[RMDB]
RNA sequence: GGGAACGACUCGAGUAGAGUCGAAAACCACCCGGCCUCGGGGCUUAAGAUAUAGUCCGGCCCCGGCGAAAGCCGAUGUCGAGAUGAGGGGGUGCGACCCCAGAGCUCGGCAGUAGGGAUCAGAGUUCCUGCUCUAAUGUGGGCACGUGCGGCUUAAACUUAAUUUAGGGUUCGCCCUAAAUUAAGUAAAAGAAACAACAACAACAAC
Reactivity to 2A3 in 0.01 (KOAc 150mM, MgCl2 10mM, bicine 150mM(pH8.5), 24C), signal-to-noise 2, nucleotides 027 to 156: c000c000a010c010c030c000g050g000c020c040u040c070g000g010g000g010c000u130u200a090a000g010a020u110a040u070a300g050u000c020c010g030g010c050c040c000c000g000g000c040g030a080a080a000g000c020c020g040a030u030g020u020c000g020a010g020a090u140g060a190g030g010g010g030g020u050g130c090g100a260c000c010c010c000a010g030a000g020c020u000c010g000g000c000a000g010u060a020g030g000g010a040u140c040a010g030a030g090u040u030c020c010u020g030c010u020c040u170a100a140u200g020u100g070g020g030c020a000c070g040u030g040c040g020g000c000u030u080a060a110
Reactivity to DMS in 0.01 (KOAc 150mM, MgCl2 10mM, bicine 150mM(pH8.5), 24C), signal-to-noise 1, nucleotides 027 to 156: c000c020a250c020c060c020g020g030c030c020u000c000g020g060g050g020c030u000u030a120a110g020a070u000a090u000a200g000u000c020c060g010g000c010c010c010c000g020g020c060g000a060a080a110g030c010c000g000a080u010g020u000c010g020a020g040a080u000g010a290g020g010g030g050g060u020g000c140g020a150c010c040c000c000a000g020a140g000c000u010c050g010g010c070a080g010u000a070g030g050g020a070u020c030a200g000a190g010u000u000c010c020u000g000c050u000c030u000a130a110u000g000u010g000g010g000c010a030c150g000u010g020c010g020g020c030u010u020a030a190
Structure probing data (2A3 and DMS) for a 207-nucleotide construct. Source: RMDB library RSTRND, as collected in RNAgym. The reactions ran in a buffer of 150 mM KOAc, 10 mM MgCl2 and 150 mM bicine (pH 8.5), at 24 C. For 2A3 the reverse transcriptase was SuperScript II with manganese.